[RMDB]
RNA sequence: GGGAACGACUCGAGUAGAGUCGAAAAUUCGACGACCUAUGGAGCCAUCACUUUCUUAUGAUGUCAAUUUCCGGUCGACAGAUCUCAGAGCGAGAUACAGUGACCAGGAGUUCACUCUGCCUUGAGCCGUUCUUUUACUCUUCGGAGUAAAAGAACGAAAAGAAACAACAACAACAAC
Reactivity to 2A3 in 0.01 (KOAc 150mM, MgCl2 10mM, bicine 150mM(pH8.5), 24C), signal-to-noise 2, nucleotides 027 to 126: u020u010c010g020a000c000g020a030c010c000u080a230u190g050g000a010g020c020c000a030u040c000a030c040u120u220u180c020u060u220a080u130g030a000u030g030u050c020a080a030u060u130u000c010c020g000g000u020c020g020a000c010a030g060a000u020c010u000c020a130g040a070g130c060g070a010g000a020u100a130c030a030g050u000g070a010c010c030a050g020g050a050g050u080u020c010a010c020u030c020u030g010c020c010u030u050g010a010g030c020
Reactivity to DMS in 0.01 (KOAc 150mM, MgCl2 10mM, bicine 150mM(pH8.5), 24C), signal-to-noise 3, nucleotides 027 to 126: u020u000c070g000a180c050g010a050c050c020u010a140u000g010g000a080g000c060c020a050u000c050a070c090u000u010u000c090u010u010a120u000g000a060u000g000u020c030a100a040u000u000u000c010c030g000g010u010c000g000a100c180a080g010a050u000c000u000c020a110g020a120g020c230g040a020g010a060u010a070c110a070g000u000g030a050c040c050a170g030g000a080g020u030u000c060a030c040u000c010u000g000c040c050u010u000g000a030g000c100
The data come from the RNA Mapping Database (RMDB), library RFMREP. Chemical mapping of a 177-nucleotide RNA with 2A3 and DMS. Conditions: 150 mM KOAc, 10 mM MgCl2 and 150 mM bicine (pH 8.5), 24 C. DMS (dimethyl sulfate) methylates the pairing face of unpaired adenines and cytosines. For 2A3 the reverse transcriptase was SuperScript II with manganese.